[RMDB]
RNA sequence: GGGAACGACUCGAGUAGAGUCGAAAACUUCACUGCACGCAGAAAUUUUCCUUCCUCAAAAUCAAGGACACGGUCUACCAGCAAGAACGGAAAACGGUGCGGGAGUAGAUCCAAAAUCUCUUCAAUAAAAAUGACUGAUAUUCGUAUCAGUCAUUUUAAAAGAAACAACAACAACAAC
Reactivity to 2A3 in 0.01 (KOAc 150mM, MgCl2 10mM, bicine 150mM(pH8.5), 24C), signal-to-noise 2, nucleotides 027 to 126: c030u020u030c050a000c070u070g000c040a030c060g110c020a100g130a170a190a120u060u020u020u000c010c000u030u030c000c000u100c030a090a100a050a190u140c040a040a100g060g020a050c050a010c200g090g030u000c020u060a090c020c010a010g080c020a050a090g030a080a030c050g000g010a010a090a000a000c010g010g030u020g000c000g050g010g010a020g000u000a020g010a030u010c020c000a040a090a120a130u100c100u000c040u180u120c060a090a130u300a100
Reactivity to DMS in 0.01 (KOAc 150mM, MgCl2 10mM, bicine 150mM(pH8.5), 24C), signal-to-noise 4, nucleotides 027 to 126: c030u000u020c030a110c080u010g010c020a040c040g030c090a110g000a030a120a180u010u000u000u000c010c010u000u000c060c030u010c150a080a070a130a080u010c120a090a110g000g020a050c100a090c130g000g020u000c030u000a100c090c030a110g010c130a070a060g000a050a040c140g000g000a040a050a060a090c060g030g020u000g010c060g020g000g000a040g010u000a030g000a080u010c030c060a040a060a140a100u010c070u010c060u000u000c070a050a130u020a030
Structure probing data (2A3 and DMS) for a 177-nucleotide construct. For DMS, 2,927 sequencing reads were counted. It was measured as part of the RMDB library OK2TRN.